[RMDB]
RNA sequence: GGGAACGACUCGAGUAGAGUCGAAAACAAGCCUCUUCGCAAGAAGUGGAAGGUUCAGAGACUAAAUGGUUGUGGGUGGCAGACGGUUUCGCGAAUGUAUGAAUCAAUCAUAAACACGUGAAGGAAGUCUGCUGCUUAAGAUAUAGUCCGAGCCACAGAUAUAGUGCUUGUUCGCAAGCACUAUAUCAAAAGAAACAACAACAACAAC
Reactivity to DMS in 0.01 (KOAc 150mM, MgCl2 10mM, bicine 150mM(pH8.5), 24C), signal-to-noise 3, nucleotides 027 to 156: c050a080a200g030c010c000u000c000u000u000c020g020c300a190a160g000a040a020g010u000g000g000a120a040g000g010u000u000c060a120g010a270g000a050c000u010a020a130a170u000g040g000u000u000g010u000g010g000g060u000g020g000c020a040g030a040c020g020g020u010u000u010c000g050c010g010a060a080u000g010u000a020u000g010a060a260u010c200a100a220u000c010a020u000a060a040a030c030a070c030g020u000g020a040a030g030g010a120a290g020u000c000u010g010c000u000g010c010u000u000a040a070g000a130u000a090u000a030g000u000c020c000g000a070g000c010c000a020c060a160
Reactivity to 2A3 in 0.01 (KOAc 150mM, MgCl2 10mM, bicine 150mM(pH8.5), 24C), signal-to-noise 4, nucleotides 027 to 156: c030a030a020g080c000c000u020c000u030u030c030g000c090a100a030g000a000a000g010u050g040g040a240a160g030g000u030u030c070a070g090a010g010a090c000u040a080a130a090u170g090g030u080u090g050u100g060g010g010u000g010g000c010a000g010a010c010g050g080u000u020u010c010g010c000g010a120a050u100g020u030a010u020g040a040a090u150c170a060a090u030c000a040u000a010a020a010c040a000c040g000u000g010a000a010g070g070a000a100g020u000c000u000g000c000u000g000c010u000u010a020a020g030a010u090a010u010a110g000u000c000c000g010a000g000c010c000a100c060a030